[RMDB]
RNA sequence: GGGAACGACUCGAGUAGAGUCGAAAACACGAGCCGCGAGGCUCGUGACUGGAGGAGACUCCAGAAAGGUGUCAACAGUAGCUGCGAGGAAGAGACUCGACACCGUGACCAUCACAACAGACCGUGAGGUCAAGUGAUGGACACAAGCAGCACUGAAUAGUAUUACGCUGUUCGCAGCGUAAUACUAAAAAGAAACAACAACAACAAC
Reactivity to DMS in 0.01 (KOAc 150mM, MgCl2 10mM, bicine 150mM(pH8.5), 24C), signal-to-noise 2, nucleotides 027 to 156: c040a040c000g000a090g000c020c020g060c220g000a260g010g070c010u000c020g000u000g020a060c010u000g010g000a080g010g040a270g050a300c000u010c040c000a070g000a070a110a030g000g060u000g000u000c040a150a190c080a150g010u050a120g000c010u010g060c000g000a170g010g020a140a070g000a140g030a040c000u000c040g020a030c000a020c000c010g020u000g000a110c020c000a040u000c000a020c020a170a160c130a280g000a010c010c020g010u000g000a300g090g000u000c010a010a280g010u010g000a030u010g010g000a080c060a060c000a060a070g000c000a010g000c000a300c030u020g000a060a160
Reactivity to 2A3 in 0.01 (KOAc 150mM, MgCl2 10mM, bicine 150mM(pH8.5), 24C), signal-to-noise 4, nucleotides 027 to 156: c000a000c000g000a040g000c000c000g020c040g020a050g000g010c000u000c000g000u000g000a010c010u010g010g000a000g020g020a050g020a050c000u000c000c000a000g000a030a060a000g000g000u000g010u010c060a100a070c040a200g030u050a050g000c000u000g000c010g030a020g040g040a110a130g040a060g050a130c000u010c030g000a000c010a000c010c000g000u000g000a040c000c000a000u000c000a000c020a190a090c040a080g000a010c000c000g110u120g110a080g010g000u000c000a010a020g000u000g000a000u000g000g020a000c010a000c000a000a010g000c010a000g000c000a000c010u000g000a000a030